Chemical mapping of a 177-nucleotide RNA with 2A3 and DMS. Conditions: 150 mM KOAc, 10 mM MgCl2 and 150 mM bicine (pH 8.5), 24 C. For DMS, 3,559 sequencing reads were counted. For 2A3, 2,361 sequencing reads were counted.
RNA sequence: GGGAACGACUCGAGUAGAGUCGAAAAGCCGAAGUAUGGAUGCGGCCCUGGGCUUCGGUGGUGGGCACCCGCUGGACGCGGUGGGUACCGGCUUCGAAUUUGAGCCGGGAAUAGACAUUCUGGCCGCCUUACGCGUUAUGUUCGCAUAACGCGUAAGAAAAGAAACAACAACAACAAC
Reactivity to 2A3 in 0.01 (KOAc 150mM, MgCl2 10mM, bicine 150mM(pH8.5), 24C), signal-to-noise 2, nucleotides 027 to 126: g010c000c010g000a000a000g030u050a060u240g020g050a060u090g000c000g000g010c000c000c000u030g040g040g000c000u020u000c010g000g010u040g030g060u180g020g040g000c020a020c000c030c000g000c020u080g080g080a080c080g000c040g100g000u010g070g000g000u030a060c000c000g010g000c030u100u140c110g170a300a270u180u120u290g000a000g000c000c020g000g000g020a000a030u090a030g110a030c040a060u190u000c060u070g050g010c000c000g000c010
Reactivity to DMS in 0.01 (KOAc 150mM, MgCl2 10mM, bicine 150mM(pH8.5), 24C), signal-to-noise 2, nucleotides 027 to 126: g000c000c010g000a030a000g020u000a050u000g010g000a150u000g000c010g010g000c010c010c100u010g000g020g000c000u010u000c010g020g010u000g010g020u000g020g000g000c120a100c140c000c010g020c030u000g000g010a170c190g010c020g030g000u000g000g000g010u000a140c020c010g000g000c020u000u010c100g020a100a210u010u010u000g000a020g000c000c010g010g000g000a040a060u010a100g000a120c150a110u010u000c080u010g000g010c010c010g010c030
2A3 adducts were read by reverse transcription with SuperScript II with manganese.